[RMDB]
RNA sequence: GGGAACGACUCGAGUAGAGUCGAAAAAGAUGGAUGUGACAACACACAAUUAUGUGACCAAUUCCCAAAUGAUAUUCAUACUCACAAUCCAUAUCCACCAUACUGUAUGCCACUCAAAUUUAUGUGCAACGGUACAAGCUUAUACUUGCACAACGUGGACGAGAAAUUGUUUCGACAAUUUCUCGUCAAAAGAAACAACAACAACAAC
Reactivity to DMS in 0.01 (KOAc 150mM, MgCl2 10mM, bicine 150mM(pH8.5), 24C), signal-to-noise 2, nucleotides 027 to 156: a110g000a110u000g020g030a080u000g030u010g000a140c020a130a150c050a140c000a050c050a150a120u010u000a160u000g030u020g000a120c040c060a090a220u010u000c010c020c010a040a100a160u000g020a120u010a140u000u000c070a060u000a110c100u000c020a030c030a070a130u000c040c000a080u000a090u000c010c000a070c030c020a170u000a060c060u000g000u000a060u000g030c040c020a090c050u010c060a010a050a120u020u000u000a070u020g050u010g010c010a030a020c020g000g020u010a000c010a010a030g020c010u030u000a150u010a030c020u000u000g000c010a030c040a060a020c020g010u000g030
Reactivity to 2A3 in 0.01 (KOAc 150mM, MgCl2 10mM, bicine 150mM(pH8.5), 24C), signal-to-noise 7, nucleotides 027 to 156: a000g080a030u040g020g010a020u020g020u030g040a050c060a160a020c030a040c000a000c020a090a080u300u160a090u230g030u060g020a070c010c050a050a100u050u060c020c010c000a020a070a020u150g020a020u030a090u160u130c080a010u050a150c010u010c020a010c010a040a190u010c020c010a010u010a040u060c020c020a010c030c000a040u040a100c040u040g030u110a060u080g070c040c020a060c040u110c060a060a140a140u140u230u070a090u150g030u010g000c000a000a040c050g030g000u030a030c060a130a010g000c020u060u130a030u040a120c010u010u030g000c020a010c000a070a070c110g050u070g060